RNA sequence: GGGAACGACUCGAGUAGAGUCGAAAAGAUAUGGAAAGAACUACGAGCAAUGCUCGGGCUAAGGCGAAGAACUCGUUCGGAAACGAACGAGGGAGCCUUAGCCCGAGUGACUCGCUUUCCUAAGUCACCACACAAACUUGUUCGCAAGUUUGUGUGGAAAAGAAACAACAACAACAAC
Reactivity to DMS in 0.01 (KOAc 150mM, MgCl2 10mM, bicine 150mM(pH8.5), 24C), signal-to-noise 1, nucleotides 027 to 126: g050a040u000a300u000g000g000a020a030a000g000a120a130c180u040a300c020g000a000g020c080a140a060u050g000c000u000c000g010g000g030c030u020a020a010g040g030c000g020a050a120g000a200a220c000u000c000g090u030u010c010g000g010a100a100a240c040g000a000a030c000g000a010g020g000g010a120g000c000c000u000u000a010g030c000c000c000g000a000g000u000g000a060c000u000c010g000c000u000u000u000c000c010u000a060a210g010u000c080a230